[RMDB]
RNA sequence: GGGAACGACUCGAGUAGAGUCGAAAAGUGUCUGACAAGAACGACCGUAUAGUACGAGAGGAACUACGGUUGGUGGCCACUGGUGUACCGGUUGUUCGAGAGAGCACGUGCCGGGUAGCCACGCCACACGGGGUAAGAGCUGAACGCAUCUAAGCUCGUUGUUAAGAUGCUUCGGCAUCUUAACAACAAAAGAAACAACAACAACAAC
Reactivity to 2A3 in 0.01 (KOAc 150mM, MgCl2 10mM, bicine 150mM(pH8.5), 24C), signal-to-noise 3, nucleotides 027 to 156: g140u110g020u020c050u040g060a050c080a060a130g070a130a090c050g000a010c000c010g000u000a020u010a020g010u000a010c020g010a020g000a030g090g000a020a000c000u010a010c020g020g000u000u010g010g000u000g000g000c010c000a040c030u000g010g020u070g180u300a040c010c020g000g000u040u060g010u040u010c020g000a010g010a010g010a010g090c020a040c210g020u050g040c000c020g000g000g010u020a000g020c000c010a020c140g020c000c010a000c000a010c000g020g000g010g000u070a080a030g020a000g020c020u040g030a090a040c090g020c120a050u020c070u080a060a020g010c000u000c070
Reactivity to DMS in 0.01 (KOAc 150mM, MgCl2 10mM, bicine 150mM(pH8.5), 24C), signal-to-noise 1, nucleotides 027 to 156: g030u000g030u000c050u000g000a170c100a080a090g010a080a130c020g000a010c030c000g000u000a020u000a140g020u000a140c020g030a250g010a170g000g010a160a140c180u000a050c020g010g000u000u000g010g050u020g040g020c050c090a070c020u000g000g000u000g010u000a300c020c010g030g010u000u020g010u000u000c000g040a250g030a260g000a030g020c000a040c300g040u010g000c000c010g050g000g000u000a300g030c000c020a040c000g010c030c010a120c010a020c000g000g010g040g000u010a030a080g010a060g000c020u010g040a030a070c000g020c020a100u000c010u000a210a080g000c020u000c080
An RNA of 207 nucleotides, treated with 2A3 and DMS and read out base by base. 2A3 adducts were read by reverse transcription with SuperScript II with manganese. The reactions ran in a buffer of 150 mM KOAc, 10 mM MgCl2 and 150 mM bicine (pH 8.5), at 24 C. DMS adducts were read by reverse transcription with MarathonRT.